Overview: Source: RMDB library OK2TRN, as collected in RNAgym. Chemical mapping of a 177-nucleotide RNA with DMS and 2A3. The 2A3 profile rests on 4,549 reads. For DMS the reverse transcriptase was MarathonRT. The DMS profile rests on 7,023 reads.
[RMDB]
RNA sequence: GGGAACGACUCGAGUAGAGUCGAAAAGUGCGGAGUGAAAUUCAUAGGAGCCUCACCAUUAUGGGUGAACGCCGCGGUAAUCCGCGUAGUCGCGACGUAAACGUUCUGUGUUCGCGUUCAGGCCUCACGUACCUAAUCAGUUCGCUGAUUAGGUACGAAAAGAAACAACAACAACAAC
Reactivity to DMS in 0.01 (KOAc 150mM, MgCl2 10mM, bicine 150mM(pH8.5), 24C), signal-to-noise 5, nucleotides 027 to 126: g030u000g010c040g010g020a080g010u000g000a070a100a100u010u000c060a090u010a120g010g010a110g010c040c030u000c020a010c010c010a120u010u000a070u010g010g010g020u010g010a070a030c050g020c040c020g010c010g010g000u020a100a120u000c020c030g000c030g020u000a080g010u000c010g010c030g000a020c030g010u000a060a050a060c080g010u000u000c110u000g020u000g000u010u010c050g010c040g000u000u010c080a100g000g010c030c030u000c070a270
Reactivity to 2A3 in 0.01 (KOAc 150mM, MgCl2 10mM, bicine 150mM(pH8.5), 24C), signal-to-noise 4, nucleotides 027 to 126: g090u060g000c020g030g010a070g030u170g090a060a100a130u190u140c090a050u130a140g090g050a040g020c010c020u010c010a010c010c010a030u120u190a100u300g180g000g010u020g010a040a000c020g010c010c010g000c030g000g010u060a100a070u060c020c020g040c040g020u050a020g040u020c020g010c020g020a010c010g030u010a070a060a010c040g030u090u070c060u100g070u040g040u110u050c050g010c020g030u030u020c040a030g000g070c010c020u040c010a030